[RMDB]
RNA sequence: GGGAACGACUCGAGUAGAGUCGAAAAAAAAACGAUGAUCCAGUUGUAGCGGUGAUUAUCGUAGCUAUCAGCUGGAUCAUCAAUCGGUCGCGACACCGAACGAUAACCGCAGACAUGCUGAAAAAAAGCAUUAUUAGUUGUUCGCAACUAAUAAUGCAAAAGAAACAACAACAACAAC
Reactivity to 2A3 in 0.01 (KOAc 150mM, MgCl2 10mM, bicine 150mM(pH8.5), 24C), signal-to-noise 2, nucleotides 027 to 126: a000a000a000a000a000c080g000a000u020g000a000u000c000c000a010g000u010u020g000u020a010g000c040g000g080u090g110a170u090u300a150u280c030g020u010a020g000c000u000a020u240c010a020g000c000u000g000g010a000u010c010a000u000c000a000a000u010c000g000g020u030c030g000c020g140a020c040a040c050c020g020a030a010c010g010a020u060a050a040c010c020g040c020a010g050a070c060a110u110g040c040u110g110a090a010a000a000a030a010a000
Reactivity to DMS in 0.01 (KOAc 150mM, MgCl2 10mM, bicine 150mM(pH8.5), 24C), signal-to-noise 3, nucleotides 027 to 126: a080a030a030a050a100c190g000a010u000g010a020u000c000c000a010g020u000u000g030u000a030g020c010g000g040u030g000a250u000u000a070u000c070g020u020a220g000c020u000a020u020c000a010g030c000u000g000g010a000u000c010a000u000c010a090a060u000c030g000g030u010c030g010c070g000a100c150a080c080c010g000a030a040c110g000a070u000a100a100c040c030g000c060a050g000a070c190a080u000g000c050u020g010a000a000a050a110a070a060a120